[RMDB]
RNA sequence: GGGAACGACUCGAGUAGAGUCGAAAAUAAGGCAGUGGCCCGUAAGUUAGAACGUAUGGCUGAUCAGGCUAUGACUUCUAUGUAUAAGCAAGCACGUGCUGAAGACAAGAAAGCAAAAAUUGUCAGUGAGGCUCCAUGUUCGCAUGGAGCAAAAGAAACAACAACAACAAC
Reactivity to DMS in 0.01 (KOAc 150mM, MgCl2 10mM, bicine 150mM(pH8.5), 24C), signal-to-noise 8, nucleotides 027 to 129: u000a080a060g030g030c030a020g000u020g010g000c020c030c030g010u040a050a070g050u030u010a040g000a010a010c180g040u000a050u020g020g040c040u000g000a140u070c200a120g000g000c050u000a050u000g040a080c000u010u030c010u030a030u050g000u000a070u020a110a070g000c070a100a050g000c090a090c130g040u040g050c020u040g020a050a080g030a090c010a060a070g020a070a090a090g010c100a040a020a070a070a050u010u010g000u030c040a090g020u000g020a110g010
Reactivity to 2A3 in 0.01 (KOAc 150mM, MgCl2 10mM, bicine 150mM(pH8.5), 24C), signal-to-noise 6, nucleotides 027 to 129: u170a020a010g030g000c010a020g010u020g030g080c010c000c010g050u090a020a020g030u030u080a020g030a030a000c100g020u050a030u060g020g000c010u020g040a300u150c090a070g030g000c010u010a030u070g090a070c020u000u000c000u020a070u030g100u020a100u020a150a050g030c040a070a000g030c010a030c080g060u070g000c000u020g020a060a020g020a010c010a010a020g050a100a070a000g070c110a050a030a000a000a060u070u030g020u060c020a030g060u000g070a030g050
Structure probing data (DMS and 2A3) for a 170-nucleotide construct. Values are in units of 0.01, from 0 to 300, in steps of 10. For 2A3 the reverse transcriptase was SuperScript II with manganese. Values cover nucleotides 27 to 129. The reactions ran in a buffer of 150 mM KOAc, 10 mM MgCl2 and 150 mM bicine (pH 8.5), at 24 C.